[RMDB]
RNA sequence: GGGAACGACUCGAGUAGAGUCGAAAAUGUACCGGGGCCAGAUGGUGGGAAGCGAAGCGCAAGAAGGAUCCGCGCUUCCAGGAGAAGGCCGUCGCGCUGGCGAAGAUGGUCGAGCAGGUGGCUACGUUUGCCGGGUACGAAAACGGCGACUAUGAGGGUUUUACUAGCCUUUCGAGGCUAGUAAAACAAAAGAAACAACAACAACAAC
Reactivity to 2A3 in 0.01 (KOAc 150mM, MgCl2 10mM, bicine 150mM(pH8.5), 24C), signal-to-noise 1, nucleotides 027 to 156: u090g000u010a030c030c000g010g000g000g010c020c070a010g030a120u050g060g040u040g000g050g020a040a000g000c020g100a000a010g010c010g030c020a000a100g080a070a130g250g060a120u120c050c060g030c000g000c000u030u000c000c000a070g010g030a130g040a090a040g010g000c090c000g000u010c050g000c010g000c020u020g000g000c000g000a050a050g020a200u110g050g000u040c020g000a020g010c050a000g000g030u030g050g030c020u070a070c090g010u000u070u080g000c010c000g010g000g020u040a090c030g060a010a040a030a000c000g000g000c010g030a040c040u050a140u150g010a020g000g030